Chemical mapping of a 207-nucleotide RNA with 2A3 and DMS. The RNA was probed in 150 mM KOAc, 10 mM MgCl2 and 150 mM bicine (pH 8.5) at 24 C. Source: RMDB library ARCHII, as collected in RNAgym.
[RMDB]
RNA sequence: GGGAACGACUCGAGUAGAGUCGAAAAUAAUGAGGGGCGUACGGCUCAGGGCCGAAAGGCAGCAGGCAAAAGUCCCCGCGUCAUGACAGUGGUCGGAUAGCGCUUGCGAGCUGUCGGCAUCAGCCAGCCUUGUCAAUACCUCCAGACCCACCACUUUAAAUCAUAUGAAGUUCGCUUCAUAUGAUUUAAAAGAAACAACAACAACAAC
Reactivity to 2A3 in 0.01 (KOAc 150mM, MgCl2 10mM, bicine 150mM(pH8.5), 24C), signal-to-noise 2, nucleotides 027 to 156: u220a010a110u090g000a010g010g020g010g000c010g020u070a030c070g020g010c010u010c080a060g010g060g020c010c000g050a050a010a020g050g000c000a010g020c010a010g000g010c000a000a130a270a000g010u020c020c000c000c000g010c010g010u090c070a140u210g130a130c040a090g010u020g030g070u230c140g030g000a000u020a080g050c070g000c060u000u000g010c020g040a070g020c030u040g050u080c000g000g000c010a100u090c020a040g000c000c010a000g000c000c000u010u050g090u040c020a010a010u030a050c000c000u000c000c040a090g040a160c020c020c010a020c040c000a050c030u000u000u000
Reactivity to DMS in 0.01 (KOAc 150mM, MgCl2 10mM, bicine 150mM(pH8.5), 24C), signal-to-noise 1, nucleotides 027 to 156: u000a110a130u010g000a210g040g040g060g010c050g030u010a030c080g030g040c010u000c030a150g010g020g020c020c000g030a020a070a050g030g010c050a300g020c000a070g000g030c000a120a140a120a300g010u000c000c000c000c070g070c000g030u000c040a210u000g010a160c080a120g030u000g030g010u010c060g020g000a140u000a090g060c290g000c020u000u010g000c110g000a060g030c020u000g020u000c000g000g040c010a050u010c070a070g030c020c020a190g010c020c000u000u000g000u000c060a120a130u000a070c030c020u000c010c040a170g010a210c030c010c010a030c060c030a140c170u010u000u010